[RMDB]
RNA sequence: GGGAACGACUCGAGUAGAGUCGAAAAGAUAUGGAGACAGCGAUAAGCUGCCAUCGGAAACGAUGGGCAGCUUUUGACGCUGCUCCUAAGUCAAACCGUCUGAAUCACUUCGGUGAUUCAGACGGAACAAUCCUGCAGACUUCGGUCUGCAGGAUUGAAAAGAAACAACAACAACAAC
Reactivity to DMS in 0.01 (KOAc 150mM, MgCl2 10mM, bicine 150mM(pH8.5), 24C), signal-to-noise 1, nucleotides 027 to 126: g030a040u000a240u020g020g000a020g030a220c000a000g030c010g020a110u000a050a040g010c020u000g000c000c000a000u020c000g010g000a160a090a170c000g000a020u000g030g020g030c000a000g020c000u000u000u000u030g010a210c050g000c000u000g010c000u000c000c000u000a010a060g010u000c030a090a110a200c040c000g000u000c010u010g000a010a010u000c000a030c020u000u000c140g030g000u020g000a020u000u000c000a010g000a000c020g000g000a010a070